[RMDB]
Chemical mapping of a 207-nucleotide RNA with 2A3. The 2A3 profile rests on 868 reads. For 2A3 the reverse transcriptase was SuperScript II with manganese. The data come from the RNA Mapping Database (RMDB), library RSTRND. Conditions: 150 mM KOAc, 10 mM MgCl2 and 150 mM bicine (pH 8.5), 24 C.
RNA sequence: GGGAACGACUCGAGUAGAGUCGAAAAAUAAAUUGCUGCAAACUUGUUAGUUGGCGAAAACGCAGACUACGCUUUAGCCGCUUAAUUGGCUAACUGUCCUUGGUAACGUGCUCGUGCGCCUCCAAAGACAGACGACUACACGAGAUGCUGGAAUUGUCUAGCUUAUUCCGUUCGCGGAAUAAGCUAGAAAAGAAACAACAACAACAAC
Reactivity to 2A3 in 0.01 (KOAc 150mM, MgCl2 10mM, bicine 150mM(pH8.5), 24C), signal-to-noise 2, nucleotides 027 to 156: a000u200a000a010a030u030u060g070c040u040g010c040a040a150a220c140u030u030g020u110u040a020g010u050u020g000g000c000g050a010a060a020a020c120g040c030a020g040a170c070u100a020c070g000c010u000u000u020a010g000c000c040g040c080u150u300a100a090u250u110g000g000c010u000a010a000c000u000g000u000c020c020u000u000g000g000u040a170a110c020g000u020g040c080u060c180g190u180g070c010g010c030c020u040c000c000a030a000a000g000a010c000a000g000a000c000g000a030c000u060a010c010a000c090g000a000g000a000u050g000c000u010g050g070a010a010u070u020g030u020